[RMDB]
RNA sequence: GGGAACGACUCGAGUAGAGUCGAAAAAUGGUGUUGGGGUCCUGGGAUCCUUCUGGUCACCCCACACCGCCAUCCUCAAUAUACAGCUCUGUGACCAGUGGUCCCAGGUGGCUGCCAAAGCUCCUGCCAUCACGGCUGCAUUCCAGCCACAGGAGGAAUUUAUUAUCAUCUUCGGAUGAUAAUAAAUAAAAGAAACAACAACAACAAC
Reactivity to 2A3 in 0.01 (KOAc 150mM, MgCl2 10mM, bicine 150mM(pH8.5), 24C), signal-to-noise 4, nucleotides 027 to 156: a010u060g010g000u020g030u090u140g030g010g000g030u030c000c010u010g000g040g010a050u200c090c000u180u080c070u040g000g000u030c020a030c000c010c000c000a010c000a000c000c010g000c010c000a070u020c010c010u120c060a110a040u140a040u050a180c020a020g010c020u030c010u120g020u010g020a000c010c010a110g070u110g220g020u020c000c010c000a000g010g020u020g040g010c020u010g020c010c040a090a060a050g040c000u010c010c000u030g080c060c050a210u140c060a060c100g010g020c010u010g010c010a120u240u120c060c000a000g030c000c010a020c010a000g000g000a000g000g020a010
Reactivity to DMS in 0.01 (KOAc 150mM, MgCl2 10mM, bicine 150mM(pH8.5), 24C), signal-to-noise 3, nucleotides 027 to 156: a080u010g020g020u000g010u000u000g030g020g030g010u000c020c030u000g020g000g010a080u000c090c150u010u000c030u000g030g030u000c020a080c010c000c010c010a050c030a030c030c030g020c070c040a080u000c040c030u030c060a090a150u000a170u010a090c030a050g010c020u000c080u010g020u010g000a040c010c010a150g010u000g030g020u000c020c000c020a060g000g030u000g010g010c020u000g040c030c070a080a160a190g010c030u000c010c000u000g010c000c010a070u000c060a040c060g000g020c010u000g020c010a160u010u010c080c010a050g020c010c020a110c030a020g010g010a030g020g020a100

Conditions: 150 mM KOAc, 10 mM MgCl2 and 150 mM bicine (pH 8.5), 24 C.
An RNA of 207 nucleotides, treated with 2A3 and DMS and read out base by base.
DMS adducts were read by reverse transcription with MarathonRT.
The DMS profile rests on 8,494 reads.
Reactivities are rounded to 0.1 and cut off at 0 and 3.
The 2A3 profile rests on 3,061 reads.